An RNA of 207 nucleotides, treated with 2A3 and DMS and read out base by base. For 2A3 the reverse transcriptase was SuperScript II with manganese. For DMS the reverse transcriptase was MarathonRT. Source: RMDB library OK3TST, as collected in RNAgym.
[RMDB]
RNA sequence: GGGAACGACUCGAGUAGAGUCGAAAAGUGUAUAGGCAAACCGACCCUCCGCCUAUACACGAAUUAAGGAGGGCGGAGAUCUUAUGCUCGCGAUCUUACGUCACGAGCGACGGCCUGCGGCUCGUGACGAAUCUUACGCAGGCCAUAGCGAGCUACAAAAUUAAUUUACGUUCGCGUAAAUUAAUUUAAAAGAAACAACAACAACAAC
Reactivity to 2A3 in 0.01 (KOAc 150mM, MgCl2 10mM, bicine 150mM(pH8.5), 24C), signal-to-noise 3, nucleotides 027 to 156: g010u020g000u000a010u010a000g010g000c030a070a070a090c070c000g200a300c050c000c020u050c020c030g000c010c000u010a000u000a000c000a010c000g000a010a030u140u150a100a020g040g010a010g010g000g000c000g040g010a060g000a030u020c020u080u160a060u200g010c000u000c010g020c010g040a030u030c020u090u160a070c020g000u000c000a000c000g000a000g010c060g020a030c040g000g000c000c000u020g000c030g030g010c010u000c000g010u010g000a000c010g000a010a030u060c020u060u080a030c030g010c000a000g020g000c010c010a020u040a000g010c000g000a000g000c000u050a050c090a030
Reactivity to DMS in 0.01 (KOAc 150mM, MgCl2 10mM, bicine 150mM(pH8.5), 24C), signal-to-noise 2, nucleotides 027 to 156: g020u000g000u000a010u000a010g010g000c020a030a080a070c020c010g010a210c060c010c020u000c020c010g000c020c000u000a020u010a010c010a030c020g020a040a120u010u020a080a100g020g000a050g050g050g010c050g040g000a120g020a100u000c020u000u000a100u000g040c000u010c010g030c010g020a050u000c060u010u020a140c040g020u000c000a010c000g020a060g020c020g010a080c050g030g020c030c010u020g030c020g000g000c030u000c010g000u000g030a100c010g000a030a000u000c080u000u010a110c050g000c000a030g020g030c000c020a110u010a060g010c010g000a080g010c040u000a110c090a060